[RMDB]
RNA sequence: GGGAACGACUCGAGUAGAGUCGAAAACGUUCGUCUUCGGACGAACGAAAAAGCGUACUACGUGGGAGCGUGUACCUCCCCACCUUAUCCCAAAUAGGAUAAGAGGGUAUAAACGCAUCGAUCACGUAUCGCAAAAAACCUGGUUUCGACCAGGUAACAUGCACCGUAGGUUCGCCUACGGUGCAUGAAAAGAAACAACAACAACAAC
Reactivity to 2A3 in 0.01 (KOAc 150mM, MgCl2 10mM, bicine 150mM(pH8.5), 24C), signal-to-noise 2, nucleotides 027 to 156: c020g000u030u000c010g000u000c010u040u090c270g160g000a000c000g000a000a000c000g030a000a030a000a000a000g010c010g030u070a080c000u000a000c040g000u010g000g030g030a040g000c020g030u000g030u020a070c010c030u130c010c010c010c010a070c000c000u000u010a020u010c020c000c020a300a220a280u290a110g000g000a000u000a000a000g000a000g000g000g000u050a020u080a040a260a000c010g000c030a140u300c030g030a020u070c000a000c020g010u030a000u300c190g000c100a000a000a000a000a000a150c050c010u010g000g040u020u090u030c150g160a110c010c000a000g020g000u000a000a020